The record gives the reactivity of an RNA of 177 nucleotides to 2A3 and DMS. Values cover nucleotides 27 to 126. The DMS profile rests on 3,723 reads. The reactions ran in a buffer of 150 mM KOAc, 10 mM MgCl2 and 150 mM bicine (pH 8.5), at 24 C. For DMS the reverse transcriptase was MarathonRT.
RNA sequence: GGGAACGACUCGAGUAGAGUCGAAAAGACUCUGAGUCACACUGAGUGAGAGUCAGAGUGACACAGACACUCUCACUCUCUGAGUGUCUGUCAGUGACACAGUCUCUCAGUCAGAGUCUGUGACAGACUUCCCAACAGGUUUCGACCUGUUGGGAAGAAAAGAAACAACAACAACAAC
Reactivity to 2A3 in 0.01 (KOAc 150mM, MgCl2 10mM, bicine 150mM(pH8.5), 24C), signal-to-noise 3, nucleotides 027 to 126: g040a020c040u030c040u090g070a050g060u020c010a000c000a010c010u050g020a040g180u020g010a010g010a010g020u020c020a010g030a000g280u050g030a010c010a000c000a040g060a010c000a010c000u000c000u000c030a130c080u140c010u010c040u060g020a020g000u000g000u000c000u020g070u090c090a110g030u030g100a010c000a000c010a050g060u000c010u000c000u000c030a020g170u020c010a010g020a010g110u050c070u050g020u000g000a010c020a010g120a030
Reactivity to DMS in 0.01 (KOAc 150mM, MgCl2 10mM, bicine 150mM(pH8.5), 24C), signal-to-noise 3, nucleotides 027 to 126: g010a080c020u010c020u010g000a120g010u010c030a060c050a120c020u000g000a020g000u000g010a000g000a030g030u020c050a060g020a130g020u010g000a060c050a040c060a030g000a050c000a020c010u000c000u010c100a090c200u010c150u000c050u000g000a030g010u010g010u000c010u000g000u000c130a050g010u010g000a090c020a060c040a070g010u000c020u000c000u000c020a040g010u000c030a010g000a050g000u000c130u000g010u000g000a040c040a120g000a120
Source: RMDB library OK2TRN, as collected in RNAgym.